[RMDB]
RNA sequence: GGGAACGACUCGAGUAGAGUCGAAAAUCUUGACCAGCGCAGGUGCUGACGCGACCGGUGGCAUCACCGAGUUGCUCGAGCCUCAACCUCCUUUUUCUCUAUCUUAGCUUGGUCUCCGGGCGAGGGUGUUUAGCCCUUGGAACCGCAGUAGGUUCCUCAACUAGGAUGUCUUCGGACAUCCUAGUUGAAAAGAAACAACAACAACAAC
Reactivity to 2A3 in 0.01 (KOAc 150mM, MgCl2 10mM, bicine 150mM(pH8.5), 24C), signal-to-noise 1, nucleotides 027 to 156: u030c000u030u140g040a030c050c040a010g000c040g020c140a030g000g050u030g010c030u030g030a030c060g000c000g000a020c030c000g050g010u000g000g110c040a190u250c000a200c000c020g030a160g030u020u110g000c010u000c030g030a020g030c020c000u060c020a110a150c010c010u120c000c020u210u090u000u120u010c090u040c020u120a200u020c080u070u110a020g030c030u080u210g000g000u020c050u000c040c010g070g000g090c050g000a040g080g000g000u070g000u010u180u100a090g020c000c000c000u050u030g030g000a040a000c000c010g000c020a050g070u130a020g060g000u010u000c000c000u000